[RMDB]
RNA sequence: GGGAACGACUCGAGUAGAGUCGAAAACAAAAGUCGCAUUCAAGAAAUGAUAGAAUUUGUCUCUAUCGACAAACUGCAAAACAUCGUAAAAGAAGUUUUAGCGCAAGAAUCUAUUACAACCAAUCAAGCACGAUUAAAAUUUCGAUUUUAAUCGUGCAAAAGAAACAACAACAACAAC
Reactivity to DMS in 0.01 (KOAc 150mM, MgCl2 10mM, bicine 150mM(pH8.5), 24C), signal-to-noise 2, nucleotides 027 to 126: c030a060a100a100a040g000u020c060g000c100a100u050u020c040a170a250g000a090a130a100u010g000a000u000a000g010a060a150u000u000u000g010u000c060u050c130u020a050u080c060g000a080c170a110a010a180c260u050g030c030a010a030a000a000c020a040u000c000g010u000a040a060a100a160g000a000a010g000u000u000u000u000a100g010c070g020c020a050a160g010a220a150u000c030u000a020u000u000a010c040a170a100c200c080a070a110u070c060a030a170
Reactivity to 2A3 in 0.01 (KOAc 150mM, MgCl2 10mM, bicine 150mM(pH8.5), 24C), signal-to-noise 6, nucleotides 027 to 126: c040a040a070a020a040g140u120c060g060c120a090u080u140c100a170a070g060a110a160a040u160g010a010u030a040g020a040a110u060u050u040g080u020c030u000c010u140a190u080c050g000a000c000a010a110a010c040u070g000c000a010a000a000a020c010a020u040c030g070u130a050a090a060a030g030a060a030g010u010u010u010u100a070g010c030g000c040a020a050g030a100a060u040c010u040a060u130u130a120c020a030a080c070c040a040a120u190c040a110a010
Structure probing data (DMS and 2A3) for a 177-nucleotide construct. Values cover nucleotides 27 to 126. The 2A3 profile rests on 4,960 reads. The data come from the RNA Mapping Database (RMDB), library OK1LIB. Conditions: 150 mM KOAc, 10 mM MgCl2 and 150 mM bicine (pH 8.5), 24 C. The DMS profile rests on 1,862 reads.